The record gives the reactivity of an RNA of 177 nucleotides to DMS. Reactivities are given for positions 27 through 126. The RNA was probed in 150 mM KOAc, 10 mM MgCl2 and 150 mM bicine (pH 8.5) at 24 C.
RNA sequence: GGGAACGACUCGAGUAGAGUCGAAAACUCUGCACCUGCACCCAGGGCUCCCGGGGAGGGGCUCGCGGCUCUGCCACAGACCCCCACCCUGCAGGGGCCGCUGCACUGGGGAGGGGCAGGCAGAGCCCUUAGAGCCCCCUUUCGAGGGGGCUCUAAGAAAAGAAACAACAACAACAAC
Reactivity to DMS in 0.01 (KOAc 150mM, MgCl2 10mM, bicine 150mM(pH8.5), 24C), signal-to-noise 2, nucleotides 027 to 126: c030u000c020u010g010c030a110c020c030u000g030c040a180c020c020c010a140g020g000g010c040u000c020c020c000g030g020g010g000a110g030g020g000g000c050u010c050g040c200g000g000c000u000c040u000g000c000c010a150c150a180g000a220c090c000c010c000c180a230c000c000c000u000g000c020a040g000g000g020g020c090c070g020c000u000g000c000a080c180u000g000g000g000g000a130g010g000g010g030c050a050g000g000c010a000g010a000g000c000c000
The data come from the RNA Mapping Database (RMDB), library OK2TRN.